[RMDB]
RNA sequence: GGGAACGACUCGAGUAGAGUCGAAAACGUAGAUACUUCGGUAUCUACGAAAAUAACGCUGGCGUGGGACACAGCCGGAGCUAGCCUCGGAUAGUCUCACUAAAACAGCAUGGUUCGCCAUGCUGAAGAACAGUAUAUUCUUCGGAAUAUACUGUUCAAAAGAAACAACAACAACAAC
Reactivity to DMS in 0.01 (KOAc 150mM, MgCl2 10mM, bicine 150mM(pH8.5), 24C), signal-to-noise 8, nucleotides 027 to 126: c010g010u000a010g010a010u000a010c000u000u020c150g040g020u000a000u000c000u000a000c000g000a020a040a060a050u010a120a140c170g010c020u000g000g010c180g010u000g000g000g010a020c020a030c060a040g000c010c020g010g000a020g010c040u010a130g010c100c010u000c010g000g000a150u000a080g000u000c010u000c000a010c030u010a040a080a090a180c010a010g000c000a010u000g010g010u000u010c230g020c000c000a010u000g000c000u000g000a040a070
Reactivity to 2A3 in 0.01 (KOAc 150mM, MgCl2 10mM, bicine 150mM(pH8.5), 24C), signal-to-noise 8, nucleotides 027 to 126: c010g000u000a000g000a000u000a000c000u040u050c270g100g000u000a000u000c000u000a000c000g000a000a000a000a010u060a050a040c090g000c080u030g040g000c120g030u010g010g000g000a010c010a000c020a080g040c020c040g180g010a010g020c060u110a040g010c010c010u010c000g020g010a030u050a110g010u000c000u010c010a010c020u090a060a080a030a050c000a000g000c000a000u000g010g010u030u060c250g020c060c000a000u000g000c000u020g020a030a020